[RMDB]
RNA sequence: GGGAACGACUCGAGUAGAGUCGAAAAGCACUCCUUUUCGAAGGAGUGCCCAGGCGCGCGGCCUUUGUCCUGUCGCGUGUGCGCCCCGCGCGAUAUACGCGCAUCUGUGCAUAUUCGUAUGCACAAAACCGCCUAACCUAUUCGUAGGUUAGGCGGUAAAAGAAACAACAACAACAAC
Reactivity to DMS in 0.01 (KOAc 150mM, MgCl2 10mM, bicine 150mM(pH8.5), 24C), signal-to-noise 1, nucleotides 027 to 126: g010c010a030c030u000c000c000u000u000u000u000c220g010a010a020g000g020a010g030u000g000c010c000c100a040g000g020c050g010c000g010c000g000g010c010c110u000u000u050g050u000c160c110u010g010u010c030g010c000g060u010g020u010g000c020g020c030c020c080c200g030c030g010c000g040a270u010a070u010a220c020g010c010g000c020a050u000c120u000g020u010g000c020a000u000a040u000u020c170g000u010a020u010g020c000a000c000a040a000a090
Reactivity to 2A3 in 0.01 (KOAc 150mM, MgCl2 10mM, bicine 150mM(pH8.5), 24C), signal-to-noise 1, nucleotides 027 to 126: g000c000a010c010u020c000c010u030u030u040u100c190g120a000a010g010g000a000g000u000g010c000c000c000a060g070g020c000g000c010g000c000g000g000c000c030u130u150u180g170u130c030c040u020g010u030c000g020c010g000u020g020u080g050c040g070c000c000c000c030g000c000g000c000g010a040u070a030u030a300c010g050c000g000c020a020u030c070u100g000u000g000c010a000u020a030u030u060c150g100u000a000u010g000c000a000c000a000a080a000
An RNA of 177 nucleotides, treated with DMS and 2A3 and read out base by base. Conditions: 150 mM KOAc, 10 mM MgCl2 and 150 mM bicine (pH 8.5), 24 C. For 2A3 the reverse transcriptase was SuperScript II with manganese. For DMS the reverse transcriptase was MarathonRT. The 2A3 profile rests on 1,557 reads.